[RMDB]
RNA sequence: GGGAACGACUCGAGUAGAGUCGAAAAGAUAUGGAAUGGACUGGACAUGAUACUCGGAAACGAGAAUAUCAACAGCCAGUGCAUUCCUAAGUCAAAAGUACAUCCAGUGUUCGCACUGGAUGUACAACGUGUGGUACUGGUUCGCCAGUACCACACGAAAAGAAACAACAACAACAAC
Reactivity to DMS in 0.01 (KOAc 150mM, MgCl2 10mM, bicine 150mM(pH8.5), 24C), signal-to-noise 1, nucleotides 027 to 126: g020a020u000a290u000g000g010a000a010u000g000g020a040c000u000g000g000a040c050a270u020g000a020u000a000c010u010c000g030g030a120a100a160c000g010a000g000a110a130u000a010u000c010a020a100c300a080g020c000c000a000g020u010g050c000a020u000u000c000c000u000a060a050g000u000c020a090a020a050a090g000u000a000c000a000u000c000c000a020g030u000g020u000u020c210g000c000a010c020u010g000g000a000u000g000u000a000c020a090a060
Reactivity to 2A3 in 0.01 (KOAc 150mM, MgCl2 10mM, bicine 150mM(pH8.5), 24C), signal-to-noise 1, nucleotides 027 to 126: g000a000u030a010u110g000g010a000a000u010g010g180a020c020u000g020g000a090c010a100u050g000a010u020a020c010u000c040g000g000a060a050a020c000g020a000g040a110a150u060a000u000c010a030a150c030a160g160c000c000a010g000u040g000c010a010u030u020c000c000u010a020a000g040u000c020a020a000a120a070g020u000a010c000a030u080c000c000a000g010u000g040u100u190c300g090c110a010c000u000g000g020a010u000g010u000a000c000a000a010